[RMDB]
RNA sequence: GGGAACGACUCGAGUAGAGUCGAAAAGCUGACGGAUAACGUGGUGUUAUAGAUAUAUAUCUUACGUCAUAAUAAUAUUAUAGCUCGCGAAAUAUAUAUAUCGUAGCUAAAUUGUUAUCGUCAGCGAACCUAAAUGCCUAUUCGUAGGCAUUUAGGUAAAAGAAACAACAACAACAAC
Reactivity to 2A3 in 0.01 (KOAc 150mM, MgCl2 10mM, bicine 150mM(pH8.5), 24C), signal-to-noise 3, nucleotides 027 to 126: g010c000u000g000a010c020g240g050a020u010a000a010c010g010u010g030g060u050g020u070u010a060u080a230g000a000u010a000u010a000u010a000u020c020u020u040a030c000g010u010c030a020u050a110a030u150a090a030u100a110u240u100a120u090a090g040c070u050c120g000c010g040a000a100a000u050a010u020a000u010a010u020a010u020c000g000u000a010g000c000u010a050a020a060u120u230g000u000u000a020u000c000g010u000c010a000g000c000g000a000
Reactivity to DMS in 0.01 (KOAc 150mM, MgCl2 10mM, bicine 150mM(pH8.5), 24C), signal-to-noise 3, nucleotides 027 to 126: g010c000u000g000a010c010g040g030a010u000a010a020c000g010u000g010g000u000g000u010u010a020u010a030g010a000u000a020u000a050u000a010u000c020u000u010a090c000g000u000c020a030u020a070a040u000a060a120u010a300u030u000a050u010a060g010c300u000c130g020c030g000a040a020a070u000a010u000a030u000a040u020a010u000c000g010u000a000g000c000u020a180a090a030u000u010g040u010u010a010u010c000g000u000c020a010g010c000g010a050